The record gives the reactivity of an RNA of 177 nucleotides to DMS.
RNA sequence: GGGAACGACUCGAGUAGAGUCGAAAAUUGUUUGCUCGUCGAGACUGCUUUUUAUCAUGGUUCAGGCAUCAGGUAUCUGGGGUGUCACAUAAGCAGCUGAUAUCACUCAUCUUGAAGUCAAUGUUAAGCCUAGAAGGGGAUUCGUCCCCUUCUAGGCAAAAGAAACAACAACAACAAC
Reactivity to DMS in 0.01 (KOAc 150mM, MgCl2 10mM, bicine 150mM(pH8.5), 24C), signal-to-noise 1, nucleotides 027 to 126: u000u010g000u000u000u020g000c020u000c110g000u000c110g020a160g000a090c120u000g010c010u000u040u010u000u000a060u000c100a100u000g040g000u000u000c080a110g000g000c050a070u000c060a050g000g000u000a050u010c020u000g020g030g010g000u000g020u000c080a020c150a080u010a050a150g060c080a030g000c090u010g000a030u000a070u000c040a030c070u000c080a060u000c020u010u010g000a100a100g020u000c070a090a150u000g010u000u000a080a130

Source information: The reactions ran in a buffer of 150 mM KOAc, 10 mM MgCl2 and 150 mM bicine (pH 8.5), at 24 C.